Conditions: 150 mM KOAc, 10 mM MgCl2 and 150 mM bicine (pH 8.5), 24 C. An RNA of 207 nucleotides, treated with DMS and 2A3 and read out base by base. High DMS reactivity at an A or C suggests that its Watson-Crick edge is free. The 2A3 profile rests on 2,812 reads. For DMS, 3,140 sequencing reads were counted.

RNA sequence: GGGAACGACUCGAGUAGAGUCGAAAAUGGACCUUUCGAGGUCCAAAAAAGAUAUGGAACGAAUCUGGUAGACAUGAGUACACACGUCGGAAACGACGUGUGGCUCAACAGCUACCAGAGUUCGUUCCUAAGUCAAAAACCUCGCUUCGGCGAGGAAACAAUUUCUAAGUUUCGACUUAGAAAUUGUAAAAGAAACAACAACAACAAC
Reactivity to DMS in 0.01 (KOAc 150mM, MgCl2 10mM, bicine 150mM(pH8.5), 24C), signal-to-noise 2, nucleotides 027 to 156: u000g000g010a000c000c010u000u000u010c240g030a040g020g030u000c000c010a000a020a010a130a050a080g010a120u000a230u010g000g000a050a010c030g000a050a040u020c010u010g010g020u010a010g020a020c060a300u010g000a000g040u010a140c000a000c000a030c030g010u000c010g030g000a220a150a300c020g020a000c020g020u010g000u010g000g000c030u010c000a010a040c090a140g020c030u000a020c000c010a030g010a030g010u000u000c000g020u000u000c000c010u000a000a070g010u030c040a070a080a070a050a140c000c010u000c000g010c010u000u000c300g030g030c040g010a000g000g000a010a030
Reactivity to 2A3 in 0.01 (KOAc 150mM, MgCl2 10mM, bicine 150mM(pH8.5), 24C), signal-to-noise 2, nucleotides 027 to 156: u050g000g000a010c020c010u060u110u090c280g110a060g020g000u050c000c030a060a020a000a000a000a020g070a040u090a040u080g000g000a010a000c000g000a000a000u000c000u010g000g000u000a000g020a040c030a160u050g000a020g010u300a170c000a000c000a000c000g000u000c010g020g050a080a050a040c000g010a000c040g010u000g000u000g000g010c000u000c010a000a000c030a000g020c000u000a000c000c000a000g000a000g000u000u000c000g000u000u000c000c000u000a000a000g000u000c020a000a010a040a130a140c010c000u010c000g000c010u050u070c170g120g030c000g000a010g000g000a000a030